The data come from the RNA Mapping Database (RMDB), library RFMREP. Structure probing data (DMS) for a 177-nucleotide construct. For DMS, 1,015 sequencing reads were counted. DMS adducts were read by reverse transcription with MarathonRT. Values are in units of 0.01, from 0 to 300, in steps of 10.
RNA sequence: GGGAACGACUCGAGUAGAGUCGAAAAUUUCUGUUCCGCACACGCAGACGCAGAGUAUCGUUAAGAUGUCCAUAUUGUUGUUUUAGGCCCGCUAGUAAUGCGCUACGGGUAUUUAAUAUUGUUAAACCUCUACUCUAAGGUUCGCCUUAGAGUAGAGAAAAGAAACAACAACAACAAC
Reactivity to DMS in 0.01 (KOAc 150mM, MgCl2 10mM, bicine 150mM(pH8.5), 24C), signal-to-noise 2, nucleotides 027 to 126: u010u010u000c040u000g010u000u010c040c020g060c030a070c140a050c150g000c070a080g000a070c160g000c020a030g010a050g020u000a020u010c070g000u000u010a070a150g000a080u010g000u000c050c020a070u030a160u000u000g040u000u000g000u000u000u000u000a110g000g030c010c010c020g000c300u020a030g030u000a110a100u010g010c110g000c000u000a060c030g020g010g020u000a020u010u000u000a040a060u020a160u000u000g000u000u000a050a160a080c130